RNA sequence: GGGAACGACUCGAGUAGAGUCGAAAACGGUGGGACGGGAGCCGGCGCCCCUCCCGUAGUACAUGGUGUGGCCUGUCGCAUGGCCGUAGACGCUCACGGCGUUGAACGAGCCGGAGACCCACGCGAGGGACCUUUCAUCAUUCGUGAUGAAAGGUCCAAAAGAAACAACAACAACAAC
Reactivity to DMS in 0.01 (KOAc 150mM, MgCl2 10mM, bicine 150mM(pH8.5), 24C), signal-to-noise 1, nucleotides 027 to 126: c050g010g020u020g000g010g000a020c130g010g000g000a110g000c040c070g000g030c060g020c070c020c050c010u000c010c000c020g000u000a040g010u010a080c060a020u010g010g000u000g010u000g010g020c270c110u020g000u040c000g040c150a300u000g000g000c000c020g000u000a190g000a020c010g000c000u020c160a070c260g040g000c010g020u030u010g010a050a140c060g010a230g040c000c000g010g010a210g000a060c010c020c010a070c050g030c080g000a090g000
This 177-nucleotide RNA was probed chemically with DMS. In probing experiments dimethyl sulfate is read out at A N1 and C N3, which are open when not base-paired. For DMS the reverse transcriptase was MarathonRT. Source: RMDB library OK2TRN, as collected in RNAgym.